An RNA of 207 nucleotides, treated with 2A3 and read out base by base. For 2A3, 551 sequencing reads were counted. Conditions: 150 mM KOAc, 10 mM MgCl2 and 150 mM bicine (pH 8.5), 24 C.
RNA sequence: GGGAACGACUCGAGUAGAGUCGAAAAGCUAAGGAAGGAGAAUGGCGUGAACCCAGGAGGCGGAGCUUGCUGUCAGCUGAGAUUGCGCCACUGUACUCCAGCCUGGACGACAGAGCAAGACUCCAUCUCAAAAAAGAAAAAAGAAAAAACGUAGGCACCUUCCUUAGGGAUUCGUCCCUAAGGAAGGAAAAGAAACAACAACAACAAC
Reactivity to 2A3 in 0.01 (KOAc 150mM, MgCl2 10mM, bicine 150mM(pH8.5), 24C), signal-to-noise 1, nucleotides 027 to 156: g020c020u020a000a140g040g040a110a000g020g020a010g010a090a120u100g050g020c000g060u080g100a050a080c070c000c030a020g060g000a070g000g000c020g000g000a010g050c030u020u040g020c000u040g030u060c020a020g010c000u000g030a050g000a300u100u170g030c010g060c130c140a060c130u090g010u010a000c030u000c000c010a010g000c000c010u100g070g020a020c070g040a070c020a000g130a020g150c010a000a010g030a300c000u010c000c000a000u000c000u000c000a040a060a040a000a040a000g210a110a090a010a000a000a010g110a030a110a020a150a000a000c050g110u130a180g000g040c040a020